Background: Structure probing data (2A3 and DMS) for a 170-nucleotide construct. Reactivities are given for positions 27 through 129. For 2A3 the reverse transcriptase was SuperScript II with manganese. For 2A3, 13,287 sequencing reads were counted.

[RMDB]
RNA sequence: GGGAACGACUCGAGUAGAGUCGAAAAGACUGCUGAUGAAACAAAGGCGCUUAAAGAGUUAUAUGGCCCCGUUGAUCCUACUUUCUUACACAGAUUCUAUUCACUUAAGGCUGCAGUCCAUGGGUGGCACGCAAACACUUCGGUGUUUGCAAAAGAAACAACAACAACAAC
Reactivity to 2A3 in 0.01 (KOAc 150mM, MgCl2 10mM, bicine 150mM(pH8.5), 24C), signal-to-noise 8, nucleotides 027 to 129: g030a020c040u050g000c020u000g030a050u050g040a110a100a010c060a020a110a010g050g000c060g010c060u040u030a050a110a040g080a040g060u230u040a140u020a060u270g040g000c010c000c000c000g000u040u090g020a090u060c000c020u020a070c020u060u080u040c020u010u110a060c140a010c030a080g010a060u090u020c030u110a130u090u100c050a040c090u060u080a090a040g050g000c030u050g010c010a000g030u010c030c010a070u060g020g030g000u000g010g010c050a020c060
Reactivity to DMS in 0.01 (KOAc 150mM, MgCl2 10mM, bicine 150mM(pH8.5), 24C), signal-to-noise 5, nucleotides 027 to 129: g030a060c050u020g010c040u020g020a070u030g000a090a130a080c120a060a090a220g010g040c030g000c000u000u000a020a040a060g020a080g040u000u030a110u030a040u060g000g000c030c040c000c080g070u020u060g020a060u050c000c000u020a080c140u000u000u000c050u020u070a060c100a090c110a030g020a120u010u040c020u020a100u020u030c040a070c140u000u000a070a100g010g040c090u040g020c040a080g050u040c070c020a100u050g000g000g000u060g030g050c090a050c150